[RMDB]
RNA sequence: GGGAACGACUCGAGUAGAGUCGAAAACGCUCCAUGCGGUCACACGGAAGCACUGAUUUCUCAAUAGAACUUAUUCUUCGUCCAUCCCUUGAAAAUGCUUCUGUUAUUGAUGGGCCUUAGAACACAAAUCAGCUGAGUCAUUCGUGACUCAGCUGAUAAAAGAAACAACAACAACAAC
Reactivity to 2A3 in 0.01 (KOAc 150mM, MgCl2 10mM, bicine 150mM(pH8.5), 24C), signal-to-noise 1, nucleotides 027 to 126: c030g000c040u100c120c020a070u220g040c000g070g000u000c000a010c010a010c060g000g000a020a020g050c010a000c070u030g050a130u010u100u050c010u020c000a050a160u210a100g030a100a100c030u100u070a120u160u170c020u080u050c020g010u000c000c000a040u000c050c010c080u000u070g080a140a110a020a040u040g010c000u020u000c020u020g040u090u080a080u070u050g050a040u020g000g000g000c030c000u050u030a100g030a050a040c040a000c010a110a150
Reactivity to DMS in 0.01 (KOAc 150mM, MgCl2 10mM, bicine 150mM(pH8.5), 24C), signal-to-noise 1, nucleotides 027 to 126: c100g010c030u000c020c120a130u000g000c080g010g000u020c010a120c070a040c030g000g010a110a060g000c040a030c120u000g000a070u000u000u010c020u000c070a090a080u000a080g000a170a190c260u000u010a120u000u000c010u000u000c050g000u030c040c030a150u000c030c080c020u000u000g000a080a040a060a060u000g010c030u000u000c000u000g020u000u060a220u000u010g000a080u000g030g000g010c030c050u000u010a060g000a130a100c150a080c170a080a060

The record gives the reactivity of an RNA of 177 nucleotides to 2A3 and DMS.
Conditions: 150 mM KOAc, 10 mM MgCl2 and 150 mM bicine (pH 8.5), 24 C.
DMS adducts were read by reverse transcription with MarathonRT.
It was measured as part of the RMDB library OK2TST.
The DMS profile rests on 686 reads.
The 2A3 profile rests on 1,056 reads.